[RMDB]
An RNA of 207 nucleotides, treated with 2A3 and read out base by base.
Conditions: 150 mM KOAc, 10 mM MgCl2 and 150 mM bicine (pH 8.5), 24 C.
The 2A3 profile rests on 573 reads.
RNA sequence: GGGAACGACUCGAGUAGAGUCGAAAACCUACCCAAGGUGAAAGCUCCUUCUCUCGCAAUGUGUAACUCAUGGUUCUCAUGACCCCUGGUUGGAGAGAUCCGGACUAGGAGCCAGGGGGCCUCUGAUAAAGCCAGACGCACUUCGGUGCGUCUGGAAGCUAACUCCAUUGUUCGCAAUGGAGUUAGCAAAAGAAACAACAACAACAAC
Reactivity to 2A3 in 0.01 (KOAc 150mM, MgCl2 10mM, bicine 150mM(pH8.5), 24C), signal-to-noise 1, nucleotides 027 to 156: c010c000u020a050c020c010c010a090a010g070g000u080g110a140a090a030g060c020u070c000c020u090u040c040u030c000u010c070g050c070a050a080u160g030u050g060u140a050a050c020u020c070a050u090g000g000u140u040c080u000c030a130u100g040a070c000c000c000c010u010g030g040u040u090g090g020a040g010a000g000a070u060c070c100g060g030a070c030u120a060g030g030a010g010c000c000a020g010g000g000g000g000c010c010u080c090u060g090a140u080a240a070a000g040c000c000a000g000a000c000g000c000a000c000u040u080c210g070g000u000g000c000g030u020c000u000g000g010a010a000